[RMDB]
Structure probing data (DMS and 2A3) for a 207-nucleotide construct. Values cover nucleotides 27 to 156. The data come from the RNA Mapping Database (RMDB), library M2RFPK.

RNA sequence: GGGAACGACUCGAGUAGAGUCGAAAACAGAGCUGAUGGGCCAUGUACCUAUCCAAAAUGAGAUCCCAUCUUGCACACUGUGCUAAUUUGAGAUUCUCAUGCCUCUUACUUGGAGAGAUCUGGACUACUAACUGUAUGACGUUCGCGUCAUACAGAACGUAUUCUGCUUCUUCGGAAGCAGAAUACGAAAAGAAACAACAACAACAAC
Reactivity to DMS in 0.01 (KOAc 150mM, MgCl2 10mM, bicine 150mM(pH8.5), 24C), signal-to-noise 2, nucleotides 027 to 156: c000a080g010a080g020c030u030g030a070u000g010g020g060c000c030a110u010g020u010a050c030c020u000a060u000c010c100a040a070a090a050u010g000a040g020a070u000c010c010c020a030u010c070u000u000g000c000a020c020a180c090u000g020u000g050c030u010a020a020u000u000u020g020a010g010a040u000u010c010u010c010a020u000g000c090c030u000c020u010u000a060c100u000u000g010g020a060g020a100g020a060u000c020u000g000g000a110c050u010a100c160u000a070a230c010u000g000u000a000u000g000a030c000g020u000u010c290g010c020g030u000c000a000u000a010c010a000g000a020a100
Reactivity to 2A3 in 0.01 (KOAc 150mM, MgCl2 10mM, bicine 150mM(pH8.5), 24C), signal-to-noise 8, nucleotides 027 to 156: c020a010g030a010g050c060u080g020a060u060g010g020g000c070c060a120u170g060u140a100c030c010u040a040u040c050c050a070a070a010a100u040g010a030g000a040u040c020c010c000a000u010c020u020u040g000c010a030c020a060c160u270g000u000g030c040u140a060a100u030u020u040g030a030g010a040u280u040c000u000c000a010u040g040c020c010u020c020u040u110a190c050u030u130g020g010a040g000a010g000a020u020c030u050g020g060a030c050u080a040c020u060a270a070c010u020g000u000a000u000g010a000c010g010u020u060c220g020c000g070u020c000a000u000a000c000a000g000a010a000